[RMDB]
RNA sequence: GGGAACGACUCGAGUAGAGUCGAAAAAUCGUUCUAACACAAAGCUCAAGCAGCAGAACAAGCCCUUCAAGUCUAAGCACUUGUCUAAGAGCAGCUUGCGUGACAAGGCCAAAGGUGCGCCGACGUCUGAUGGACAAGCAUUCGUGCUUGUCCAUCAAAAAGAAACAACAACAACAAC
Reactivity to DMS in 0.01 (KOAc 150mM, MgCl2 10mM, bicine 150mM(pH8.5), 24C), signal-to-noise 2, nucleotides 027 to 126: a080u010c100g010u000u000c010u020a140a110c090a060c180a070a090a140g000c010u020c050a050a150g040c010a050g030c020a090g000a050a060c140a040a110g030c000c070c060u000u020c050a010a030g030u000c030u020a060a140g010c130a120c030u000u010g000u000c140u000a050a070g010a050g000c000a100g020c070u020u000g030c090g040u030g010a050c090a070a110g000g020c060c080a040a080a050g000g020u010g010c000g020c050c090g020a070c220g040u000c060